Structure probing data (2A3 and DMS) for a 177-nucleotide construct. For 2A3, 842 sequencing reads were counted. Reactivities are given for positions 27 through 126.

RNA sequence: GGGAACGACUCGAGUAGAGUCGAAAAGGCUGAAGAGCCUCUGAGUUCACUCAUGUGGGCCUCUCCACAGGUCCAUCUCACAGACCAGCAGAUGGCUUCCCCUAGAGAGAGUGAUCCCAGAGAUUGAGAGUUAUGGAUACUUCGGUAUCCAUAACUCAAAAGAAACAACAACAACAAC
Reactivity to 2A3 in 0.01 (KOAc 150mM, MgCl2 10mM, bicine 150mM(pH8.5), 24C), signal-to-noise 1, nucleotides 027 to 126: g040g020c030u090g040a180a100g060a140g270c040c020u000c030u050g040a020g010u060u000c000a000c060u010c010a120u160g010u050g120g040g000c030c000u000c050u000c070c010a060c030a040g070g000u060c000c000a010u000c010u010c000a120c000a050g130a240c000c000a020g080c000a020g030a170u070g120g000c050u110u070c000c060c000c060u110a040g010a000g000a000g000a010g080u010g030a020u070c000c020c000a010g020a030g010a060u050u170g070a100
Reactivity to DMS in 0.01 (KOAc 150mM, MgCl2 10mM, bicine 150mM(pH8.5), 24C), signal-to-noise 2, nucleotides 027 to 126: g000g000c030u000g000a210a090g020a090g000c060c000u000c020u020g000a060g000u000u000c000a020c000u010c020a180u020g020u020g000g000g000c010c010u000c140u000c140c110a050c210a100g000g010u000c000c010a010u000c010u000c020a130c190a130g010a110c060c080a040g010c160a100g010a100u010g000g010c230u010u000c050c020c010c100u010a090g000a120g000a190g000a010g020u020g010a040u000c010c000c010a010g000a030g000a160u000u000g000a180